[RMDB]
RNA sequence: GGGAACGACUCGAGUAGAGUCGAAAAAGCGGCUAAUGAACAAAUGCCUUACAAUAAGGCUGUAAAGUCCGCGUACGCAGAUGUCCUCAAGGACAAAAUGAAUAGGGAACAGGAGAUUAGCCUACGAAUAUGGUAACAUGUUCGCAUGUUACCAUAUAAAAGAAACAACAACAACAAC
Reactivity to 2A3 in 0.01 (KOAc 150mM, MgCl2 10mM, bicine 150mM(pH8.5), 24C), signal-to-noise 5, nucleotides 027 to 126: a010g050c040g030g000c020u030a060a030u120g110a150a030c030a060a130a050u160g000c000c000u010u010a050c040a070a100u170a170a000g000g000c000u020g070u110a120a080a020g020u020c000c000g090c030g090u020a040c070g000c020a000g020a100u050g020u030c000c010u100c120a080a180g000g010a020c010a010a050a000a040u070g020a040a030u050a130g030g020g010a030a050c020a040g040g040a140g010a030u020u040a010g020c000c000u030a030c040g070a090
Reactivity to DMS in 0.01 (KOAc 150mM, MgCl2 10mM, bicine 150mM(pH8.5), 24C), signal-to-noise 9, nucleotides 027 to 126: a130g010c200g010g010c020u000a030a030u000g010a130a130c100a080a110a080u010g010c000c000u000u000a120c300a110a110u010a030a010g000g010c000u000g010u010a080a090a090g000u000c000c010g000c070g010u000a060c300g000c050a020g010a180u000g010u000c000c000u000c300a080a150g020g000a020c020a010a040a090a100u000g000a060a060u010a120g000g000g000a040a050c060a090g000g010a120g000a050u000u010a030g000c010c000u010a110c140g010a090

Chemical mapping of a 177-nucleotide RNA with 2A3 and DMS. The DMS profile rests on 14,364 reads. Conditions: 150 mM KOAc, 10 mM MgCl2 and 150 mM bicine (pH 8.5), 24 C. Values are in units of 0.01, from 0 to 300, in steps of 10. For 2A3 the reverse transcriptase was SuperScript II with manganese.